[RMDB]
RNA sequence: GGGAACGACUCGAGUAGAGUCGAAAACACCUCCAUACAUUUUACUGUUCCUGUUAUAAUAGUGACAGGUAUAGAAAAACGUAUUGUAUAGUUGUACAGUUCCUAUUAUGCGUAUCAAAGAUAAAACUGUAUCGUCUAAGUUCGCUUAGACGAUACAAAAAGAAACAACAACAACAAC
Reactivity to 2A3 in 0.01 (KOAc 150mM, MgCl2 10mM, bicine 150mM(pH8.5), 24C), signal-to-noise 3, nucleotides 027 to 126: c060a020c000c020u000c010c010a030u000a020c010a010u020u030u030u060a130c000u040g000u060u000c000c000u020g010u000u020a140u010a250a300u280a140g040u040g020a000c000a000g000g030u000a000u000a030g050a020a020a020a000a020c030g000u010a000u010u090g020u010a130u090a170g070u000u080g000u010a050c030a090g020u000u030c000c010u020a110u210u050a120u180g120c040g040u040a030u180c060a100a070a020g050a050u070a160a010a000a040c020
Reactivity to DMS in 0.01 (KOAc 150mM, MgCl2 10mM, bicine 150mM(pH8.5), 24C), signal-to-noise 3, nucleotides 027 to 126: c070a130c060c030u030c080c070a040u030a000c010a060u000u000u030u000a130c000u000g040u000u010c000c000u000g000u010u010a090u000a170a110u050a150g000u010g040a010c000a010g020g000u000a000u010a030g000a110a020a010a000a040c080g030u000a010u000u000g020u010a090u020a070g000u000u000g000u010a020c150a150g000u000u000c010c000u000a110u000u010a060u010g010c080g030u000a050u000c130a070a060a050g000a100u020a050a060a090a060c170
Structure probing data (2A3 and DMS) for a 177-nucleotide construct. The RNA was probed in 150 mM KOAc, 10 mM MgCl2 and 150 mM bicine (pH 8.5) at 24 C. For 2A3, 961 sequencing reads were counted. 2A3 adducts were read by reverse transcription with SuperScript II with manganese. The data come from the RNA Mapping Database (RMDB), libraries RFM100 and RFMREP.